[RMDB]
RNA sequence: GGGAACGACUCGAGUAGAGUCGAAAAUUACACCUGGCUUCACUUGUGUGACUUUUGCAAUGGGAAGAGAGAGAGAAGGUCCCCUUGGUACCUCAGCUCGGCCUUAUGGUGGCCUCUUUCCUUGAAGAGCUAAAGGAAGAUUCGUCUUCCUUUAGCUAAAAGAAACAACAACAACAAC
Reactivity to 2A3 in 0.01 (KOAc 150mM, MgCl2 10mM, bicine 150mM(pH8.5), 24C), signal-to-noise 9, nucleotides 027 to 126: u090u050a020c040a030c010c010u020g080g020c030u060u060c010a050c090u120u050g020u010g010u030g180a160c030u050u070u070u130g050c070a110a090u170g010g010g020a020a020g020a000g010a000g000a000g010a000g030a100a040g030g010u040c010c000c000c020u060u150g020g020u070a040c000c010u040c040a040g050c030u030c020g030g010c010c000u120u100a200u190g170g040u060g020g000c000c000u000c000u000u000u000c000c000u010u060g060a070a030g050
Reactivity to DMS in 0.01 (KOAc 150mM, MgCl2 10mM, bicine 150mM(pH8.5), 24C), signal-to-noise 9, nucleotides 027 to 126: u010u020a090c110a100c020c020u000g000g000c080u010u010c080a070c080u000u000g020u000g010u000g000a150c090u000u000u010u010g020c060a070a050u010g010g000g000a030a030g010a040g010a150g000a070g000a060g010a150a050g000g000u000c030c020c110c170u000u010g010g030u010a040c030c010u000c140a110g010c030u000c060g010g010c040c010u000u010a110u020g020g020u000g000g020c060c010u000c010u000u000u000c010c000u000u000g010a100a090g000

Chemical mapping of a 177-nucleotide RNA with 2A3 and DMS. For DMS the reverse transcriptase was MarathonRT. As a SHAPE reagent, 2A3 marks flexible, mostly unpaired nucleotides at the ribose 2'-OH. Conditions: 150 mM KOAc, 10 mM MgCl2 and 150 mM bicine (pH 8.5), 24 C.